Source: RMDB libraries RFM100 and RFMREP, as collected in RNAgym. The record gives the reactivity of an RNA of 177 nucleotides to 2A3 and DMS. The RNA was probed in 150 mM KOAc, 10 mM MgCl2 and 150 mM bicine (pH 8.5) at 24 C.
RNA sequence: GGGAACGACUCGAGUAGAGUCGAAAACCGAGAGUGGCAGAGCUCCGUAAAUUCGGAGUUCGCUAUUCGACCACAUGCUCGGAAGGAGGAGAUCAUGGCCGGGCCGGCCUGGGCUGCCGAAGCUCAGUCUAUUGCCGAUUUUCGAAUCGGCAAUAGAAAAAGAAACAACAACAACAAC
Reactivity to 2A3 in 0.01 (KOAc 150mM, MgCl2 10mM, bicine 150mM(pH8.5), 24C), signal-to-noise 5, nucleotides 027 to 126: c000c000g010a020g000a000g020u000g030g010c110a070g020a000g000c000u000c000c010g040u050a110a110a150u190u120c000g000g000a000g000u000u000c000g000c000u030a040u040u060c030g020a030c000c030a070c010a050u150g020c000u000c010g020g030a040a040g090g030a040g010g040a100g010a040u070c040a070u100g080g000c010c000g030g010g010c010c030g020g000c000c020u020g000g010g000c020u080g030c040c040g050a030a000g010c010u010c020a020g040
Reactivity to DMS in 0.01 (KOAc 150mM, MgCl2 10mM, bicine 150mM(pH8.5), 24C), signal-to-noise 4, nucleotides 027 to 126: c000c000g010a050g000a030g030u000g000g010c010a090g020a010g000c000u000c000c000g010u020a070a110a270u060u040c000g000g020a020g010u000u000c000g000c100u000a030u010u010c060g000a150c100c080a060c090a080u010g010c010u000c030g000g010a130a080g000g000a070g000g000a090g000a080u020c060a070u000g010g010c020c020g000g010g020c050c070g000g000c120c020u010g000g000g000c000u000g020c110c120g000a130a040g020c020u000c010a070g000
Overview
Reactivities are given for positions 27 through 126.